[RMDB]
RNA sequence: GGGAACGACUCGAGUAGAGUCGAAAAAAAAGUUUAGGUAUCCGUAACUUUGAUCAUGUCAUUGUGGCAAUUGGUGAAAAUAUUCAAUCAAGUACGUUGACGACUUUAAUUUUAAAAGAGUUAGGUGUAGCUAUCCAAAGUUCGCUUUGGAUAGCUAAAAAGAAACAACAACAACAAC
Reactivity to DMS in 0.01 (KOAc 150mM, MgCl2 10mM, bicine 150mM(pH8.5), 24C), signal-to-noise 1, nucleotides 027 to 126: a070a030a020a010g000u010u000u000a070g030g000u020a060u010c050c010g000u000a080a020c010u000u010u000g010a070u020c070a110u010g030u010c040a120u010u010g030u000g020g010c060a060a060u010u000g020g030u000g000a080a040a030a080u030a060u000u000c060a050a050u020c010a030a050g020u000a030c030g010u000u010g010a020c140g010a060c030u020u000u000a030a020u040u000u000u010a030a040a100a130g000a080g010u000u010a050g010g020u010g000
An RNA of 177 nucleotides, treated with DMS and read out base by base. The reactions ran in a buffer of 150 mM KOAc, 10 mM MgCl2 and 150 mM bicine (pH 8.5), at 24 C.